[RMDB]
RNA sequence: GGGAACGACUCGAGUAGAGUCGAAAACAACACUAUGAUAUGGACUGUAGUGAACCUCGGAUGGCGUUUGACGUCGGAAACGACCGAGCCAUCACGAGAAACCUACAGUCCUAAGUCCUCCAAAGAACUCCUCUAUACCGUUCGCGGUAUAGAGGAGAAAAGAAACAACAACAACAAC
Reactivity to DMS in 0.01 (KOAc 150mM, MgCl2 10mM, bicine 150mM(pH8.5), 24C), signal-to-noise 2, nucleotides 027 to 126: c060a120a120c190a120c230u010a120u010g020a110u000a300u000g010g010a000c000u000g010u000a010g010u000g000a100a150c190c010u000c000g010g000a020u000g010g020c000g010u000u010u000g010a150c300g000u010c000g000g000a110a070a180c000g020a030c000c000g000a110g000c000c000a000u000c030a050c010g010a030g000a000a030a100c190c000u010a000c000a010g000u000c000c000u000a020a080g010u000c020c030u000c020c090a040a100a230g020a080a170
Reactivity to 2A3 in 0.01 (KOAc 150mM, MgCl2 10mM, bicine 150mM(pH8.5), 24C), signal-to-noise 2, nucleotides 027 to 126: c050a000a050c030a050c220u240a160u300g110a040u020a030u200g050g000a010c010u000g010u030a040g000u000g090a070a070c020c010u000c020g000g000a020u000g010g000c050g030u110u300u300g090a110c060g010u020c000g020g050a060a050a020c020g010a020c040c010g000a000g010c000c000a040u070c000a100c050g000a000g000a050a010a020c000c000u000a000c020a070g000u000c000c000u000a000a000g000u010c000c020u000c010c060a240a000a000g150a100a170
The record gives the reactivity of an RNA of 177 nucleotides to DMS and 2A3. The reactions ran in a buffer of 150 mM KOAc, 10 mM MgCl2 and 150 mM bicine (pH 8.5), at 24 C. Source: RMDB library TTRDEL, as collected in RNAgym.